[RMDB]
RNA sequence: GGGAACGACUCGAGUAGAGUCGAAAAGAUAUGGAGUUCUACCCACCGUGACCUUAGAUAGAACUACGGACCAUGCUCGGAAACGAGCACAUUUCCGCUAUCUAAGGUCACGAGGAACUCCUAAGUCCGUUAGUGUUAGGUUCGCCUAACACUAACGAAAAGAAACAACAACAACAAC
Reactivity to 2A3 in 0.01 (KOAc 150mM, MgCl2 10mM, bicine 150mM(pH8.5), 24C), signal-to-noise 3, nucleotides 027 to 126: g160a090u300a180u300g010g000a000g000u030u010c030u120a300c040c000c020a010c030c000g000u010g010a000c000c010u010u000a000g010a010u030a010g040a120a190c200u160a120c300g000g000a010c040c060a050u030g000c010u030c000g000g030a100a140a100c020g010a010g120c000a010c030a010u090u160u020c000c000g000c020u000a000u030c000u000a010a000g000g010u000c000a000c000g000a000g000g000a000a000c000u000c010c000u020a100a020g160u120c130
Reactivity to DMS in 0.01 (KOAc 150mM, MgCl2 10mM, bicine 150mM(pH8.5), 24C), signal-to-noise 4, nucleotides 027 to 126: g000a170u010a230u000g010g020a000g020u000u000c020u010a100c060c000c020a300c150c000g010u010g010a020c000c000u010u000a000g000a000u000a020g000a090a040c120u030a300c030g010g000a020c300c300a200u000g000c010u020c000g010g010a170a080a270c000g010a010g020c010a000c080a180u000u000u000c000c000g010c020u000a000u000c000u000a000a000g000g010u000c000a000c000g010a030g010g010a010a020c000u010c000c000u000a040a020g000u000c090
Structure probing data (2A3 and DMS) for a 177-nucleotide construct. The reactions ran in a buffer of 150 mM KOAc, 10 mM MgCl2 and 150 mM bicine (pH 8.5), at 24 C. Source: RMDB library TTRINS, as collected in RNAgym.